RNA sequence: GGGAACGACUCGAGUAGAGUCGAAAAAGUGGCAUUACCACCCAACGCUGGGUCGCAUCUGCGGCGUGAGCGCGCACAACGGUACGGCUCUGAUCUUCACCAUGCGCGAGCGUGGAGCGAAUAUCGUCAUCGUGGCAGACAAGCAGAGCGUCAACACCAGUACCAAUUCUUUCGAGAAUUGGUACUGAAAAGAAACAACAACAACAAC
Reactivity to DMS in 0.01 (KOAc 150mM, MgCl2 10mM, bicine 150mM(pH8.5), 24C), signal-to-noise 2, nucleotides 027 to 156: a060g030u000g000g040c050a170u000u010a110c010c030a050c060c020c050a080a070c070g020c010u000g000g030g030u000c010g060c030a210u010c080u000g010c030g010g010c000g000u000g020a080g020c020g000c000g010c090a070c060a070a090c040g030g050u000a040c030g030g000c000u000c010u000g020a060u000c080u010u000c040a100c010c030a090u000g000c050g000c210g030a130g020c030g080u000g020g000a080g000c020g020a090a080u020a090u000c040g020u010c060a210u010c020g030u000g000g050c000a060g000a040c040a060a090g010c030a060g000a090g050c040g040u000c040a030a110c050a080c060
Reactivity to 2A3 in 0.01 (KOAc 150mM, MgCl2 10mM, bicine 150mM(pH8.5), 24C), signal-to-noise 6, nucleotides 027 to 156: a000g080u090g020g030c090a080u060u190a070c010c010a050c010c010c010a050a050c050g000c050u030g050g060g040u090c040g010c030a150u040c080u120g010c010g050g000c030g110u080g060a030g040c100g000c000g020c050a060c020a140a150c130g110g030u080a040c030g040g010c010u000c060u060g040a060u010c030u060u020c020a020c040c000a020u020g000c020g000c030g010a050g010c030g030u040g050g020a080g180c070g020a020a020u060a030u090c050g080u060c050a060u050c080g010u030g110g000c020a010g010a060c050a090a040g030c020a000g020a010g030c010g050u070c030a060a080c030a060c100
The record gives the reactivity of an RNA of 207 nucleotides to DMS and 2A3. The RNA was probed in 150 mM KOAc, 10 mM MgCl2 and 150 mM bicine (pH 8.5) at 24 C. Source: RMDB library OK3TST, as collected in RNAgym. For 2A3, 4,282 sequencing reads were counted. DMS adducts were read by reverse transcription with MarathonRT. Reactivities are rounded to 0.1 and cut off at 0 and 3.